[RMDB]
RNA sequence: GGGAACGACUCGAGUAGAGUCGAAAAAGACAUGGACUGUUUCAAUAAUUCCUUUGCUUCUGAAGGUGGCCUUGGAAUUUGCAAAGACUUAGCUAUAGGAUAAAUCUCUUUAAAAACAGCUUUAUUGAGGCACAAUUGACAUACAAAAAACUGCACAAUAAUCUAGCCUUUUCGAAGGCUAGAUUAUAAAAGAAACAACAACAACAAC
Reactivity to 2A3 in 0.01 (KOAc 150mM, MgCl2 10mM, bicine 150mM(pH8.5), 24C), signal-to-noise 2, nucleotides 027 to 156: a010g030a020c020a020u100g030g000a020c040u020g000u040u040u050c070a040a060u070a160a060u060u020c010c000u060u060u020g020c030u020u070c030u110g070a100a040g120g010u030g030g010c010c010u010u020g000g020a050a050u060u060u140g020c010a010a000a080g050a080c060u040u020a040g000c000u040a050u060a120g030g030a030u030a110a120a180u050c060u020c000u040u100u100a080a120a030a050a040c090a010g090c020u010u050u060a100u020u070g010a070g030g010c010a000c020a050a110u130u050g050a010c050a010u150a070c070a080a140a060a080a080a040c100u260g060c120a040c040a100